[RMDB]
RNA sequence: GGGAACGACUCGAGUAGAGUCGAAAAGAUAUGGAGUGACCCAGUCUGUGAUGCCAGCGUUGAAAACAAUGUAAUUCGGAAACGAAUUACAUUGUUGGAGCUGGUGCAUGGCUGCACUCCUAAGUCAUCUAUCCUUUUUCUUCGGAAAAAGGAUAGAAAAAGAAACAACAACAACAAC
Reactivity to DMS in 0.01 (KOAc 150mM, MgCl2 10mM, bicine 150mM(pH8.5), 24C), signal-to-noise 3, nucleotides 027 to 126: g000a050u010a300u020g000g000a020g020u010g010a250c180c300c130a000g010u020c010u000g030u000g010a140u010g010c000c010a000g010c010g010u000u020g000a190a110a010a010c000a010a000u000g010u000a010a010u000u000c000g010g000a160a120a250c000g010a030a000u000u000a010c000a010u010u000g000u000u000g010g010a120g010c010u000g000g020u010g000c030a000u010g000g000c010u000g000c010a010c010u010c000c010u000a010a060g010u000c060a190
Reactivity to 2A3 in 0.01 (KOAc 150mM, MgCl2 10mM, bicine 150mM(pH8.5), 24C), signal-to-noise 1, nucleotides 027 to 126: g070a030u110a030u210g030g010a010g000u020g070a190c080c120c000a040g080u110c050u140g170u070g210a300u170g000c000c010a010g010c010g190u270u080g000a030a010a000a020c000a000a000u010g010u000a010a010u000u030c010g060g000a100a130a090c000g000a000a000u000u000a000c000a000u000u000g000u000u000g000g000a000g010c010u000g000g000u010g030c000a000u020g000g000c000u010g050c000a000c000u000c000c000u030a170a030g080u020c020a040